Structure probing data (2A3 and DMS) for a 177-nucleotide construct.
Conditions: 150 mM KOAc, 10 mM MgCl2 and 150 mM bicine (pH 8.5), 24 C.
[RMDB]
RNA sequence: GGGAACGACUCGAGUAGAGUCGAAAAGAUAUGGAGUGUAGGGAGCGUACAUGUCGGAAACGACAUUAACGCGAGGAUCUACCUCCUAAGUCAAAGGUAGCAACUUUGUUCGCAAAGUUGCUACCAACCACAAUGGAGUGUUCGCACUCCAUUGUGGAAAAGAAACAACAACAACAAC
Reactivity to 2A3 in 0.01 (KOAc 150mM, MgCl2 10mM, bicine 150mM(pH8.5), 24C), signal-to-noise 2, nucleotides 027 to 126: g040a020u040a050u090g000g010a020g020u300g020u100a000g000g010g020a020g000c010g000u030a030c030a150u010g000u000c000g050g000a040a050a040c010g000a000c000a010u030u050a160a020c000g010c000g030a140g000g000a010u010c010u010a010c010c000u000c000c000u000a140a010g020u020c010a130a060a030g000g000u000a010g000c000a000a010c000u000u020u010g040u090u080c300g030c270a010a010a000g000u000u000g000c000u010a000c000c000a000a000
Reactivity to DMS in 0.01 (KOAc 150mM, MgCl2 10mM, bicine 150mM(pH8.5), 24C), signal-to-noise 2, nucleotides 027 to 126: g010a020u000a300u000g000g000a040g020u010g000u000a000g010g000g000a030g050c000g050u000a070c300a020u000g010u000c000g010g010a050a070a120c000g020a000c000a000u010u000a130a040c000g010c000g010a060g030g030a070u010c010u000a040c010c000u000c000c000u000a010a100g010u000c020a070a120a160g000g010u000a010g010c010a010a000c000u000u000u010g000u010u010c290g010c020a010a040a010g000u000u000g000c000u000a000c000c000a000a050
For 2A3 the reverse transcriptase was SuperScript II with manganese. For DMS the reverse transcriptase was MarathonRT. The DMS profile rests on 1,668 reads. Values cover nucleotides 27 to 126.